[RMDB]
RNA sequence: GGGAACGACUCGAGUAGAGUCGAAAAAUGAAUACGCUGGGUUCGGUCACCGAGGUCGGUGGAGCGAACUGAAGCGCGCACGGUUCGCGCUGACGACUACCCACCGGUGCCGAACCUGUGCUGAAGCGCGCACGGCAACCGAAAGGUGCGUUAGGAACUCUCUAAGUAGCUUCGGCUACUUAGAGAGAAAAGAAACAACAACAACAAC
Reactivity to 2A3 in 0.01 (KOAc 150mM, MgCl2 10mM, bicine 150mM(pH8.5), 24C), signal-to-noise 2, nucleotides 027 to 156: a000u130g060a030a050u180a070c010g000c010u000g010g020g000u030u010c010g010g090u300c070a020c020c020g000a000g020g000u000c020g010g010u110g120g260a010g000c010g000a000a000c010u010g010a090a030g000c030g010c000g000c000a000c020g010g000u020u000c000g000c000g300c300u300g010a020c000g000a000c000u060a020c050c120c060a070c020c000g010g010u000g000c000c000g000a010a000c000c000u000g000u000g000c010u000g010a070a010g000c000g020c030g000c000a000c000g000g010c000a000a020c000c010g020a100a030a000g010g000u010g000c000g000u010u000a020g040g060a040a050